[RMDB]
This 177-nucleotide RNA was probed chemically with DMS and 2A3. Source: RMDB library OK2TRN, as collected in RNAgym. DMS adducts were read by reverse transcription with MarathonRT. In probing experiments dimethyl sulfate is read out at A N1 and C N3, which are open when not base-paired. The DMS profile rests on 3,194 reads.
RNA sequence: GGGAACGACUCGAGUAGAGUCGAAAAGAGCACAGUGACACCACAGUGUAGUACUGUUAAGCUCUGUGGAGAACUUUGACAGCACAGUCGAGCAAUGUGACACCACGUGGAGCACUGUGACAACUAAAGGAUUAUUUACGUUCGCGUAAAUAAUCCUAAAAGAAACAACAACAACAAC
Reactivity to DMS in 0.01 (KOAc 150mM, MgCl2 10mM, bicine 150mM(pH8.5), 24C), signal-to-noise 4, nucleotides 027 to 126: g000a140g000c000a020c000a000g010u000g010a130c110a090c000c020a010c020a130g000u000g020u000a130g000u000a060c000u000g010u000u000a010a020g000c000u000c000u000g040u040g010g010a040g010a030a020c010u000u000u010g060a000c010a010g020c010a030c020a180g000u000c030g020a180g020c170a070a130u010g010u010g000a070c060a190c200c010a050c120g020u000g010g000a120g010c000a020c010u000g010u000g000a020c040a070a140c090u000a050a100
Reactivity to 2A3 in 0.01 (KOAc 150mM, MgCl2 10mM, bicine 150mM(pH8.5), 24C), signal-to-noise 4, nucleotides 027 to 126: g220a040g010c030a000c000a000g010u030g240a090c000a030c080c000a010c050a040g010u010g040u080a180g050u070a070c010u010g000u080u040a050a010g000c000u000c000u020g140u160g140g110a100g010a060a010c050u130u130u110g030a040c020a010g000c010a020c020a050g060u090c100g030a060g070c040a090a230u200g030u130g080a010c000a000c030c010a060c110g000u010g000g010a020g000c000a000c000u000g000u010g010a020c010a040a020c010u130a120a110